[RMDB]
RNA sequence: GGGAACGACUCGAGUAGAGUCGAAAAGAUAUGGACGAGGAGGAAGCUUGGAUUUAUGGUGGAGGUCCGUAUGGUCGGAAACGACCAUACGGAUGAAGCCAUUGUCAGCUUCGCCUCGUCCUAAGUCGUACUAAUAUUCCUUCGGGAAUAUUAGUACAAAAGAAACAACAACAACAAC
Reactivity to DMS in 0.01 (KOAc 150mM, MgCl2 10mM, bicine 150mM(pH8.5), 24C), signal-to-noise 5, nucleotides 027 to 126: g010a090u000a300u000g000g000a010c010g010a040g010g010a080g000g010a030a010g010c010u000u020g030g020a020u000u020u010a010u010g000g010u000g010g010a300g000g000u000c000c000g020u000a010u000g010g020u000c010g000g010a130a100a230c020g010a020c000c000a000u000a000c000g000g000a000u000g000a300a300g000c000c000a010u000u000g000u000c020a050g000c000u000u000c000g000c000c000u000c000g010u000c000c000u000a010a070g010u010c130
Reactivity to 2A3 in 0.01 (KOAc 150mM, MgCl2 10mM, bicine 150mM(pH8.5), 24C), signal-to-noise 7, nucleotides 027 to 126: g060a060u170a080u190g000g000a000c000g010a000g020g060a050g130g070a000a020g000c080u280u300g260g030a150u300u300u220a020u110g030g020u040g000g100a190g170g300u000c010c000g000u000a010u000g000g000u010c010g030g010a140a070a080c020g000a000c000c000a000u000a000c000g000g010a000u020g000a000a010g020c010c000a000u000u010g000u000c000a000g000c010u000u010c000g000c000c000u010c010g000u010c000c000u000a000a000g010u020c050